Chemical mapping of a 207-nucleotide RNA with 2A3. It was measured as part of the RMDB library OK3TST.
RNA sequence: GGGAACGACUCGAGUAGAGUCGAAAAGGUCCAUGUAGAUGAAUGUCACAGGGUUGGGCCGCGGUGUCUCUGUCAUGUGGGGACUCAGGCUGGAGAGUGCCUUUGCUGCUUUGCACAGAGCUAGUGGUCAUCCUGAAGGUCCAGAAUGGAUUUAUGGAGGUGCUGUGAAAUUCGUUUCACAGCACCUAAAAGAAACAACAACAACAAC
Reactivity to 2A3 in 0.01 (KOAc 150mM, MgCl2 10mM, bicine 150mM(pH8.5), 24C), signal-to-noise 1, nucleotides 027 to 156: g030g010u000c000c000a000u080g030u170a070g050a110u170g060a130a180u180g040u010c010a000c020a010g110g020g080u150u190g130g020g000c000c000g000c010g000g100u090g070u030c000u000c010u010g050u010c020a020u050g040u060g010g020g030g030a050c000u000c040a020g080g030c070u110g010g110a050g000a010g200u080g110c000c000u030u040u150g000c000u030g000c000u150u120u080g030c060a070c000a010g000a000g000c000u030a000g010u030g020g000u000c000a020u000c010c010u040g040a020a030g030g000u000c000c000a010g060a040a020u100g090g060a000u090u220u130a110u110g110g010

Description: Reactivities are rounded to 0.1 and cut off at 0 and 3.